[RMDB]
RNA sequence: GGGAACGACUCGAGUAGAGUCGAAAAUCUUCUUUACCAACCACCCAACUGUAGCAUAACCUCUGGCGUGUUGCAAAGCGGUUUGGUGAAAAUGUCACAUCCCAGUGGAGAUGUUGAGGCUUGUAUGACAACCUAUUAACUUCGGUUAAUAGGUUGUAAAAGAAACAACAACAACAAC
Reactivity to DMS in 0.01 (KOAc 150mM, MgCl2 10mM, bicine 150mM(pH8.5), 24C), signal-to-noise 4, nucleotides 027 to 126: u010c060u000u000c060u000u000u000a050c010c020a010a030c070c050a060c030c040c050a130a150c190u000g020u010a070g020c030a020u000a120a150c020c040u000c170u010g020g040c150g030u000g010u000u010g030c030a020a080a110g010c110g010g020u000u010u000g020g000u000g000a030a030a060a070u010g000u000c050a020c060a060u000c010c010c000a150g010u010g020g010a110g010a060u010g010u000u010g010a060g010g010c110u000u000g020u010a090u000g000